The record gives the reactivity of an RNA of 207 nucleotides to DMS and 2A3. Reactivities are given for positions 27 through 156. It was measured as part of the RMDB library M2RFPK. The 2A3 profile rests on 1,878 reads. The RNA was probed in 150 mM KOAc, 10 mM MgCl2 and 150 mM bicine (pH 8.5) at 24 C.
RNA sequence: GGGAACGACUCGAGUAGAGUCGAAAAACAGUACCAGCUUCUACGGCAGCUGGUACUGAACUUUCAUGGAGUUAAGAAACCACGUAAACAAAGCGGAACCGAAAAGCUAAACGAGUAGGAAGAAUAAAUAGGUACCACCACUUCGGUGGUGGUACAAGAAACGGUUAACGUUCGCGUUAACCGUUUCAAAAGAAACAACAACAACAAC
Reactivity to DMS in 0.01 (KOAc 150mM, MgCl2 10mM, bicine 150mM(pH8.5), 24C), signal-to-noise 1, nucleotides 027 to 156: a230c000a050g000u000a010c010c000a040g010c000u010u000c030u000a220c100g060g030c100a050g000c030u000g000g030u010a010c010u000g000a040a030c070u010u000u030c000a150u000g000g000a180g020u010u000a110a170g020a160a140a170c030c000a060c000g000u020a060a050a170c050a050a240a090g000c010g010g020a080a130c030c000g000a030a030a070a070g000c030u000a020a120a120c090g000a160g020u000a080g000g030a110a110g000a080a140u000a060a110a150u020a090g010g040u000a000c030c000a060c010c000a000c020u000u000c220g050g060u000g000g000u010g010g050u000a010c000a050a100
Reactivity to 2A3 in 0.01 (KOAc 150mM, MgCl2 10mM, bicine 150mM(pH8.5), 24C), signal-to-noise 3, nucleotides 027 to 156: a010c000a000g000u000a000c010c010a000g000c000u060u020c030u060a080c080g120g000c030a000g000c000u000g000g000u000a000c000u010g010a000a010c000u010u130u110c040a060u170g090g010a060g020u110u130a170a070g070a110a050a010c030c030a030c060g060u160a020a060a150c050a150a070a000g000c000g010g020a110a050c000c010g000a030a000a000a000g020c040u150a190a020a010c020g000a000g000u000a020g050g080a030a020g020a030a090u200a130a030a030u160a060g010g120u000a000c000c010a000c000c000a000c020u050u060c190g060g000u000g000g000u000g000g000u000a000c000a000a000